Structure probing data (DMS) for a 177-nucleotide construct. The reactions ran in a buffer of 150 mM KOAc, 10 mM MgCl2 and 150 mM bicine (pH 8.5), at 24 C. For DMS the reverse transcriptase was MarathonRT.
[RMDB]
RNA sequence: GGGAACGACUCGAGUAGAGUCGAAAAGUGUACCCGACGCUAUAGCCGCUUAUGUCAGGUGUAUCCUGUCGGCGGCUGAAAAGGCGUUCGGGAUAGAGUGCACAGGCGUGGUGUGUUCGGUGCCGGCGUAGCGCUCCUCAUUCGUGAGGAGCGCUACAAAAGAAACAACAACAACAAC
Reactivity to DMS in 0.01 (KOAc 150mM, MgCl2 10mM, bicine 150mM(pH8.5), 24C), signal-to-noise 1, nucleotides 027 to 126: g000u000g010u000a150c000c000c000g000a040c010g000c000u010a130u010a140g040c000c000g020c010u000u000a170u010g010u000c010a010g010g010u000g020u020a120u010c020c000u000g020u000c060g010g010c000g020g000c010u000g000a050a060a160a140g010g010c000g010u000u020c010g010g010g020a020u000a030g000a140g020u000g000c010a020c060a110g010g020c120g040u010g000g050u000g010u010g000u000u000c090g000g020u010g020c020c020g000g010c210